[RMDB]
RNA sequence: GGGAACGACUCGAGUAGAGUCGAAAAAUUGAUUUGAGACGUCGCCUUGCAGUGUUAACUUGGCUCUCAUGAACCUCUUUGAUCUACCACAAAGGGUAGGCUACGGGUGAAACCUCUUAGGCUAAAAUAAACGAGGUAGAUUCGUCUACCUCGUUUAAAAAGAAACAACAACAACAAC
Reactivity to 2A3 in 0.01 (KOAc 150mM, MgCl2 10mM, bicine 150mM(pH8.5), 24C), signal-to-noise 1, nucleotides 027 to 126: a030u090u070g030a030u100u000u100g050a010g040a040c020g070u000c010g000c020c020u030u050g020c060a090g030u050g050u210u110a020a090c010u020u040g000g000c000u020c000u010c070a020u100g090a030a040c020c020u000c010u110u020u020g130a160u030c000u050a020c020c040a050c110a130a090a090g220g000g000u020a030g130g000c000u050a000c040g000g000g000u050g000a050a000a040c020c010u040c020u060u050a040g060g030c000u040a030a040a090a190
Reactivity to DMS in 0.01 (KOAc 150mM, MgCl2 10mM, bicine 150mM(pH8.5), 24C), signal-to-noise 3, nucleotides 027 to 126: a110u010u010g010a120u000u000u000g010a110g000a050c160g010u000c030g010c020c020u000u010g010c080a040g000u000g020u000u010a050a060c050u010u000g000g010c020u010c030u000c080a060u010g040a150a070c040c010u010c050u000u000u010g000a080u000c040u010a050c020c020a100c100a090a090a130g000g010g010u000a020g010g010c020u000a040c300g010g000g000u000g000a110a080a090c040c010u000c080u000u010a050g000g010c060u000a080a050a060a130
This 177-nucleotide RNA was probed chemically with 2A3 and DMS. Source: RMDB library M2PK90, as collected in RNAgym. Conditions: 150 mM KOAc, 10 mM MgCl2 and 150 mM bicine (pH 8.5), 24 C. For DMS the reverse transcriptase was MarathonRT.